An RNA of 177 nucleotides, treated with DMS and 2A3 and read out base by base. For DMS, 3,078 sequencing reads were counted. DMS adducts were read by reverse transcription with MarathonRT. 2A3 adducts were read by reverse transcription with SuperScript II with manganese. The RNA was probed in 150 mM KOAc, 10 mM MgCl2 and 150 mM bicine (pH 8.5) at 24 C. Source: RMDB library OK1LIB, as collected in RNAgym. Reactivities are rounded to 0.1 and cut off at 0 and 3.
[RMDB]
RNA sequence: GGGAACGACUCGAGUAGAGUCGAAAACUGCUGCGCCGCGGGGUGCCAAUACCCGACGGGGUACAGCAGGCGCUCGUGCAGCGGCUUCCUAGAAAACUGCCAGUACCUCGUGAAGCUCGCGCCCGCGAGUCGAUGGCUAUUUCGAUAGCCAUCGACUAAAAGAAACAACAACAACAAC
Reactivity to DMS in 0.01 (KOAc 150mM, MgCl2 10mM, bicine 150mM(pH8.5), 24C), signal-to-noise 2, nucleotides 027 to 126: c010u010g030c030u000g040c050g020c080c110g000c050g030g020g010g010u010g020c040c140a120a030u020a030c000c030c000g020a080c120g000g000g000g010u000a020c050a260g000c020a080g010g020c100g020c100u010c040g030u000g000c000a040g010c000g000g000c010u000u000c010c020u000a100g000a140a030a110a060c060u000g000c040c030a110g060u000a020c020c000u000c020g010u000g000a060a100g000c040u020c030g000c040g000c020c040c000g020c010g040
Reactivity to 2A3 in 0.01 (KOAc 150mM, MgCl2 10mM, bicine 150mM(pH8.5), 24C), signal-to-noise 4, nucleotides 027 to 126: c020u010g010c010u030g010c010g030c040c010g020c010g010g020g030g050u080g070c050c000a150a090u130a180c040c010c010g040a060c000g030g000g000g000u020a020c010a030g040c040a020g040g000c030g000c030u100c050g140u140g010c020a010g000c000g000g000c010u060u020c020c010u000a040g120a040a120a020a060c050u070g010c010c000a070g000u000a020c000c020u010c020g020u040g070a080a030g030c090u110c090g020c030g040c010c010c000g020c020g000